The record gives the reactivity of an RNA of 177 nucleotides to DMS and 2A3. It was measured as part of the RMDB library OK1LIB.
RNA sequence: GGGAACGACUCGAGUAGAGUCGAAAACUUGUAGCCAGACGCGUCCACCGACACCCAUUGCCCCAACCUCUGAGAACUACAGAAGAUCUUCUGUAGCGAUCUGAGGCGACUGCAGAAGCUCUUCUGCAGACGCAACUGGUUUCGACCAGUUGCGUCUAAAAGAAACAACAACAACAAC
Reactivity to DMS in 0.01 (KOAc 150mM, MgCl2 10mM, bicine 150mM(pH8.5), 24C), signal-to-noise 4, nucleotides 027 to 126: c050u010u020g010u010a090g040c020c020a070g000a070c060g020c060g010u020c040c020a080c040c060g010a070c090a070c010c000c010a090u000u010g000c020c000c010c050a080a110c050c020u010c030u000g010a110g000a140a120c080u020a130c000a020g010a010a030g000a040u030c050u020u010c000u000g000u000a000g000c020g020a100u000c090u020g000a060g010g010c040g010a080c030u000g010c000a000g000a020a030g000c100u000c020u000u000c000u000g010c090
Reactivity to 2A3 in 0.01 (KOAc 150mM, MgCl2 10mM, bicine 150mM(pH8.5), 24C), signal-to-noise 7, nucleotides 027 to 126: c020u030u070g070u100a040g040c010c020a030g020a070c030g010c010g060u020c000c010a030c010c020g020a010c000a050c010c010c010a050u040u120g030c000c010c000c000a030a050c020c010u030c020u040g050a050g020a110a050c060u100a040c040a010g000a030a020g040a110u040c070u030u000c000u010g010u000a000g000c000g020a030u020c080u160g050a050g070g080c020g050a090c010u030g000c000a000g000a030a010g020c020u010c020u060u000c000u010g010c010
For DMS the reverse transcriptase was MarathonRT.